[RMDB]
Structure probing data (2A3) for a 207-nucleotide construct.
The RNA was probed in 150 mM KOAc, 10 mM MgCl2 and 150 mM bicine (pH 8.5) at 24 C.
It was measured as part of the RMDB library M2RFPK.
Reactivities are rounded to 0.1 and cut off at 0 and 3.

RNA sequence: GGGAACGACUCGAGUAGAGUCGAAAAUGCAAGUAGUGCUAUUGUUGGAAUCACCGUACCUAUUUAGGUUUACGCUCCCAGAUCGGUGGAUAGCAGCCCUAUCAAUAUCUAGGAGAACUGUGCUAUGAAAACGGUAUUGGCUUCGGCCAAUACCGAACUUCCCCUCUUGGUUCGCCAAGAGGGGAAGAAAAGAAACAACAACAACAAC
Reactivity to 2A3 in 0.01 (KOAc 150mM, MgCl2 10mM, bicine 150mM(pH8.5), 24C), signal-to-noise 1, nucleotides 027 to 156: u120g010c030a010a050g090u110a000g070u150g080c060u050a080u080u060g140u040u090g030g000a050a000u030c030a010c030c020g020u040a050c000c000u000a120u090u170u300a020g010g060u040u040u110a050c010g010c000u020c000c000c000a000g010a030u110c060g030g030u030g000g120a070u050a020g000c010a040g000c020c000c000u060a070u050c030a100a070u030a020u130c030u030a020g000g020a040g020a090a060c000u010g040u060g030c000u020a040u250g120a080a080a000a000c000g010g000u000a000u000u000g000g040c000u020u020c140g060g000c010c000a000a000u000a000c000c000g000a000a000